This 177-nucleotide RNA was probed chemically with 2A3 and DMS.
The 2A3 profile rests on 4,405 reads.
The DMS profile rests on 2,198 reads.
For DMS the reverse transcriptase was MarathonRT.
Source: RMDB library OK2TST, as collected in RNAgym.
RNA sequence: GGGAACGACUCGAGUAGAGUCGAAAAGUUUCGGCAUCUCUGGCAAGAAGGAGGAAGAAGGUGACUGUGAUGACCGUUCAUGAGGCUCAGGGAAAGACUUUUGAAAAGGUUGCGGUCGUUCGAACUAGUCUACCACUUGAUUCGUCAAGUGGUAGACAAAAGAAACAACAACAACAAC
Reactivity to 2A3 in 0.01 (KOAc 150mM, MgCl2 10mM, bicine 150mM(pH8.5), 24C), signal-to-noise 3, nucleotides 027 to 126: g020u000u040u070c010g020g020c020a080u020c020u000c000u060g020g020c050a050a000g060a050a030g110g030a020g060g020a030a050g030a030a020g080g020u060g020a030c040u030g030u080g100a060u070g080a070c010c010g020u040u040c050a050u100g010a000g030g010c010u010c080a020g000g060g010a000a040a040g020a010c020u090u090u050u070g060a070a090a020a050g050g000u070u090g030c030g040g020u020c010g010u030u030c000g020a060a030c010u040a040
Reactivity to DMS in 0.01 (KOAc 150mM, MgCl2 10mM, bicine 150mM(pH8.5), 24C), signal-to-noise 2, nucleotides 027 to 126: g020u000u010u000c020g010g010c090a070u010c050u020c050u020g000g010c090a110a100g000a080a070g000g020a060g000g010a060a050g000a100a040g010g010u000g020a060c030u000g030u000g010a110u010g010a060c040c010g000u000u000c020a030u000g000a090g010g010c040u000c030a090g010g010g010a110a110a100g010a030c020u000u010u000u010g010a060a050a070a060g000g020u010u000g000c180g020g010u000c020g010u000u000c040g010a090a120c100u010a120